[RMDB]
Chemical mapping of a 207-nucleotide RNA with DMS and 2A3. In probing experiments dimethyl sulfate is read out at A N1 and C N3, which are open when not base-paired. Values cover nucleotides 27 to 156. The 2A3 profile rests on 856 reads.
RNA sequence: GGGAACGACUCGAGUAGAGUCGAAAAAAUUGGCGCUGCGUAACGACGCUCAGUUUCGUGCGGCGGGAUUUGAGCAUGCGGCAGGUCAGGAAGAGGAGACGAUUGGGCGUGCCAAUCUGCUUCCCAAUCUCCAGUAUGGCUAUAACGCGAACCGCAGCCGGGGAAAGAAAUUCGUUUCUUUCCCCGGAAAAGAAACAACAACAACAAC
Reactivity to DMS in 0.01 (KOAc 150mM, MgCl2 10mM, bicine 150mM(pH8.5), 24C), signal-to-noise 1, nucleotides 027 to 156: a060a000u010u000g000g010c010g000c030u010g040c090g000u000a120a150c050g030a050c120g000c010u010c010a070g000u000u000u000c050g000u000g030c130g000g010c000g030g000g000a050u000u000u010g000a140g000c050a140u000g020c070g000g070c080a050g000g010u030c030a100g040g030a240a190g020a200g000g060a050g030a030c000g000a060u030u000g000g020g020c300g100u010g000c000c010a030a110u000c010u010g010c020u000u000c070c000c020a020a160u000c000u000c040c050a180g050u000a070u000g020g030c010u020a210u020a050a030c140g010c050g020a090a050c030c010g020c030a080g030
Reactivity to 2A3 in 0.01 (KOAc 150mM, MgCl2 10mM, bicine 150mM(pH8.5), 24C), signal-to-noise 2, nucleotides 027 to 156: a010a000u100u060g020g020c070g000c040u040g010c020g090u050a160a050c070g100a040c070g040c000u000c030a030g020u040u050u000c060g010u100g110c060g090g030c050g070g070g000a030u170u080u090g000a000g010c020a080u230g030c000g080g010c040a020g030g020u100c010a010g060g050a100a090g020a050g060g010a020g010a050c090g020a040u030u030g000g000g060c130g010u110g080c000c000a030a040u000c050u120g020c040u070u050c010c000c010a010a090u010c040u000c020c010a040g050u170a120u110g020g010c030u040a020u050a300a090c010g020c000g060a100a030c030c000g000c000a000g000